[RMDB]
RNA sequence: GGGAACGACUCGAGUAGAGUCGAAAAACCUUUGUGUUGAGCUUUGAUCACAAUGACAUGCGUACGCAGAUACAAGCCCAUUGGGCUUGAGUAGUACGCAACAGCAUUGUGGGAGCUCAACACUCUGGUAAAAGGGACCCACUUCGGUGGGUCCCAAUCAUUGGUCCACGUUCGCGUGGACCAAUGAAAAAGAAACAACAACAACAAC
Reactivity to 2A3 in 0.01 (KOAc 150mM, MgCl2 10mM, bicine 150mM(pH8.5), 24C), signal-to-noise 2, nucleotides 027 to 156: a000c000c000u020u000u000g010u000g000u000u000g000a020g020c000u280u190u070g130a170u300c000a000c000a000a010u020g090a190c000a070u070g020c000g020u000a010c000g070c170a010g010a100u090a140c000a010a000g000c000c000c110a300u170u300g030g000g000c000u000u000g000a000g000u080a020g000u000a010c030g010c000a000a000c010a000g010c000a010u000u000g000u020g020g000g020a000g000c000u000c000a000a000c000a000c010u000c000u010g020g010u070a150a150a090a090g010g010g000a000c000c020c000a000c010u030u030c180g120g000u000g020g000g000u000c000c000c000a000a000